[RMDB]
Notes: Structure probing data (2A3) for a 177-nucleotide construct. 2A3 is a SHAPE reagent: it acylates the 2'-hydroxyl of flexible nucleotides of all four kinds.
RNA sequence: GGGAACGACUCGAGUAGAGUCGAAAAGUGAACAUUUGAUAACUUUGACUGAGGGUCAUUAUCACACAGUUUCUGUUCUUGAUGCUCUCAAGAUAAUGAUAAGUUGUGGGGAUAAAACCGGUAGCGCGAAUUAGACCGGCUUCGGCCGGUCUAAUUCAAAAGAAACAACAACAACAAC
Reactivity to 2A3 in 0.01 (KOAc 150mM, MgCl2 10mM, bicine 150mM(pH8.5), 24C), signal-to-noise 1, nucleotides 027 to 126: g160u160g060a250a100c130a120u120u070u140g190a170u100a020a000c130u000u000u170g070a000c000u000g080a070g070g060g000u000c050a070u040u030a000u010c000a000c000a000c000a010g000u000u040u020c000u000g040u120u000c000u000u010g020a010u140g000c000u000c000u000c190a000a000g000a000u100a180a140u130g120a000u020a290a040g010u010u000g000u000g000g080g010g000a070u000a090a070a020a000c040c000g030g040u160a100g000c150g010c080
Source information: The RNA was probed in 150 mM KOAc, 10 mM MgCl2 and 150 mM bicine (pH 8.5) at 24 C. The data come from the RNA Mapping Database (RMDB), library OK1LIB. For 2A3, 412 sequencing reads were counted.